[RMDB]
An RNA of 177 nucleotides, treated with DMS and 2A3 and read out base by base. For DMS the reverse transcriptase was MarathonRT. For 2A3 the reverse transcriptase was SuperScript II with manganese. The RNA was probed in 150 mM KOAc, 10 mM MgCl2 and 150 mM bicine (pH 8.5) at 24 C. The 2A3 profile rests on 6,970 reads. DMS (dimethyl sulfate) methylates the pairing face of unpaired adenines and cytosines. It was measured as part of the RMDB library TTRDEL. As a SHAPE reagent, 2A3 marks flexible, mostly unpaired nucleotides at the ribose 2'-OH.
RNA sequence: GGGAACGACUCGAGUAGAGUCGAAAAGAUAUGGACCAGAGCAUCGAUCUACAGGUCGGAAACGACCUAAAGAGUGUAGGGAGCUCAGUCCUAAGUCAAAACCAUCACAACUUCGGUUGUGAUGGAAGAUUUAUCGACAGUUCGCUGUCGAUAAAUCAAAAGAAACAACAACAACAAC
Reactivity to DMS in 0.01 (KOAc 150mM, MgCl2 10mM, bicine 150mM(pH8.5), 24C), signal-to-noise 3, nucleotides 027 to 126: g000a010u000a130u020g000g010a040c010c050a100g010a020g010c000a080u000c040g000a060u010c000u000a060c300a020g010g010u000c000g010g010a030a050a080c000g020a010c000c000u020a040a120a030g000a090g030u000g020u000a050g000g030g000a040g010c000u000c000a220g000u000c010c010u000a010a090g000u000c030a090a090a120a210c000c000a000u000c000a000c000a000a000c000u000u000c240g020g040u010u000g020u000g010a010u010g010g020a010a010
Reactivity to 2A3 in 0.01 (KOAc 150mM, MgCl2 10mM, bicine 150mM(pH8.5), 24C), signal-to-noise 3, nucleotides 027 to 126: g010a000u040a010u060g000g000a000c060c210a190g000a050g030c030a300u220c050g110a060u020c040u010a010c030a030g000g000u000c020g000g020a040a040a000c000g000a000c000c000u020a040a080a010g100a030g040u220g040u150a150g040g200g010a010g000c000u000c010a000g010u000c010c010u010a070a000g020u020c020a040a030a030a150c010c000a000u000c010a000c010a010a010c010u080u080c220g170g000u010u000g000u010g000a000u000g000g000a020a000